[RMDB]
RNA sequence: GGGAACGACUCGAGUAGAGUCGAAAACGGGGAGAAUUAUAUUUGUAAAUCGAUAUCCCCCACCAAUGCCUAAUAGCAGGGAGGAAUCGGAACUAUUGGUAUAAAUAUCCUGAUCAAAAGGACUGGACAUUACCUGACGUUUCGACGUCAGGUAAUGAAAAGAAACAACAACAACAAC
Reactivity to DMS in 0.01 (KOAc 150mM, MgCl2 10mM, bicine 150mM(pH8.5), 24C), signal-to-noise 3, nucleotides 027 to 126: c120g000g030g000g000a110g000a130a140u010u010a050u000a120u010u000u010g020u020a050a100a120u000c020g010a040u010a150u000c010c000c000c000c010a100c110c100a150a110u010g000c020c040u030a070a050u000a180g010c010a070g000g010g040a060g020g000a050a040u000c000g010g020a070a080c120u000a040u010u000g010g020u000a050u000a020a040a070u010a160u000c010c020u010g000a120u000c100a030a070a100a050g000g010a070c100u020g010g000a300
Reactivity to 2A3 in 0.01 (KOAc 150mM, MgCl2 10mM, bicine 150mM(pH8.5), 24C), signal-to-noise 2, nucleotides 027 to 126: c010g000g000g000g010a050g070a050a080u130u050a040u020a030u070u090u090g060u050a010a080a180u070c000g010a000u020a220u090c020c010c030c030c000a000c040c050a050a070u100g000c010c000u110a090a040u100a160g000c050a020g000g060g030a150g000g000a020a010u030c020g030g010a030a000c000u020a040u070u080g020g000u010a030u030a120a160a000u130a000u060c000c010u070g120a150u090c030a020a120a100a000g030g020a020c010u030g000g000a010